[RMDB]
RNA sequence: GGGAACGACUCGAGUAGAGUCGAAAAUGAACCUUGGGCCUGGCUGGCCGGUCCGCCUAACCGCGUGUACUGGUCCGGCCGGGCCUUUCCUUCUGGGGAGCCGCAUGCCCUUCACUGGGUGUGUCGGUCAUAAAUCAAAGUUCGCUUUGAUUUAUGAAAAAGAAACAACAACAACAAC
Reactivity to DMS in 0.01 (KOAc 150mM, MgCl2 10mM, bicine 150mM(pH8.5), 24C), signal-to-noise 9, nucleotides 027 to 126: u010g010a100a130c190c060u010u010g000g000g010c000c000u000g000g010c000u000g000g000c010c000g000g000u000c010c000g010c000c020u000a140a150c300c300g000c010g010u020g020u040a000c010u000g010g000u030c010c010g010g010c000c000g000g000g010c000c000u000u000u000c000c000u000u020c090u010g010g000g010g010a240g000c000c000g000c000a010u000g000c000c000c010u000u010c300a140c160u000g000g010g020u000g010u000g000u020c010g010g000
Reactivity to 2A3 in 0.01 (KOAc 150mM, MgCl2 10mM, bicine 150mM(pH8.5), 24C), signal-to-noise 4, nucleotides 027 to 126: u090g010a060a060c030c010u050u100g020g000g000c010c000u000g000g000c000u010g000g000c000c000g000g000u020c000c000g000c000c010u050a050a030c020c010g010c000g030u080g040u110a010c000u010g000g050u110c070c010g000g000c000c000g000g010g000c000c000u000u010u000c000c000u000u020c010u050g020g000g000g020a010g020c000c000g000c010a020u010g000c010c000c000u100u110c150a260c300u070g000g000g010u030g010u010g060u090c030g010g000